[RMDB]
RNA sequence: GGGAACGACUCGAGUAGAGUCGAAAAGAUAUGGAACCUUCAGCCAACUCGUUGAUCUCAGUUCGGAAACGAACUGAGGGAGAGUGGCUGAGAGGUUCCUAAGUCAAAAGCCACGUUCGCGUGGCAAUCGGUAAUGGGAGUUCGCUCCCAUUACCGAAAAAGAAACAACAACAACAAC
Reactivity to 2A3 in 0.01 (KOAc 150mM, MgCl2 10mM, bicine 150mM(pH8.5), 24C), signal-to-noise 1, nucleotides 027 to 126: g000a030u100a050u220g000g010a010a000c010c020u000u030c020a000g020c000c010a120a300c210u000c000g300u300u020g030a020u030c010u000c000a000g010u000u000c000g030g040a130a070a070c040g000a000a000c050u010g020a010g000g000g000a010g000a000g000u010g020g020c010u000g010a010g010a000g000g010u010u020c000c000u000a030a010g060u000c030a050a070a090a060g000c030c000a000c010g020u070u130c300g030c000g110u000g000g000c000a000a020